An RNA of 177 nucleotides, treated with 2A3 and DMS and read out base by base. It was measured as part of the RMDB library M2PK50. Reactivities are given for positions 27 through 126. The RNA was probed in 150 mM KOAc, 10 mM MgCl2 and 150 mM bicine (pH 8.5) at 24 C.
[RMDB]
RNA sequence: GGGAACGACUCGAGUAGAGUCGAAAAUGACGUCGUUUCGACGACGUCAACAUAAAAUCAGCGGUAAAUAAUUUGGAGGCGUUACCGCUGAACGCCUCCAUACGAGAGGGCUAUUCGUAGCCCUCAAGAGUAUUAUCUUCUUCGGAAGAUAAUACUCAAAAGAAACAACAACAACAAC
Reactivity to 2A3 in 0.01 (KOAc 150mM, MgCl2 10mM, bicine 150mM(pH8.5), 24C), signal-to-noise 9, nucleotides 027 to 126: u070g000a000c000g000u000c010g000u000u040u120c210g070a020c000g020a000c000g000u000c000a000a010c010a020u210a010a110a020a090u030c010a000g030c000g140g190u170a050a080a050u100a050a120u130u130u240g010g000a000g000g000c000g010u000u020a110c010c010g000c000u000g000a000a000c000g000c000c000u000c000c000a030u110a060c190g040a150g000a000g090g000g000c000u020a020u040u110c160g100u030a000g000c010c000c000u000c000a000a000
Reactivity to DMS in 0.01 (KOAc 150mM, MgCl2 10mM, bicine 150mM(pH8.5), 24C), signal-to-noise 6, nucleotides 027 to 126: u010g010a000c000g010u000c000g010u000u000u010c170g030a030c000g010a010c010g010u000c000a020a070c200a090u010a060a050a070a100u000c010a010g010c000g010g010u010a030a050a040u000a030a050u000u010u010g010g010a010g000g000c010g010u000u000a070c030c000g000c000u010g000a020a010c020g000c000c000u000c000c020a110u010a030c240g000a160g000a010g000g010g010c000u000a030u000u010c150g010u000a010g000c000c000c000u000c010a000a040